Chemical mapping of a 177-nucleotide RNA with DMS and 2A3.
For DMS the reverse transcriptase was MarathonRT.
RNA sequence: GGGAACGACUCGAGUAGAGUCGAAAAAGAGGAGCCUAGGCCCUAGGUAGUGUAGUGAAAGUCAUUUGUGAAUACAAAGGAGUUGGAACUCUCUGUUCGACAAUUCUUGAAUGAACAGCAGAUUUAGGCUGUAACUGUUAUUCGUAACAGUUACAGCAAAAGAAACAACAACAACAAC
Reactivity to DMS in 0.01 (KOAc 150mM, MgCl2 10mM, bicine 150mM(pH8.5), 24C), signal-to-noise 6, nucleotides 027 to 126: a120g010a120g010g010a110g000c030c030u000a080g020g000c030c050c020u000a030g000g010u010a080g030u010g020u010a050g010u000g010a050a100a050g000u000c020a050u000u000u000g010u010g010a110a080u010a070c050a020a050a080g000g000a060g010u010u000g000g010a090a090c060u000c060u000c030u000g020u000u000c020g010a170c070a050a110u000u010c120u000u000g010a120a090u000g010a030a030c030a040g000c180a050g000a100u000u000u000a110g020
Reactivity to 2A3 in 0.01 (KOAc 150mM, MgCl2 10mM, bicine 150mM(pH8.5), 24C), signal-to-noise 2, nucleotides 027 to 126: a050g100a050g050g040a040g000c010c020u050a030g080g000c010c000c000u010a040g070g010u040a060g030u050g040u110a090g010u020g050a040a050a010g040u000c010a020u050u060u050g040u020g070a120a040u180a110c030a050a040a010g030g030a040g000u100u040g030g010a060a040c010u000c000u020c020u050g020u030u000c000g000a020c010a050a040u160u110c020u080u090g080a140a080u080g010a010a010c000a010g070c040a000g030a100u080u090u110a090g040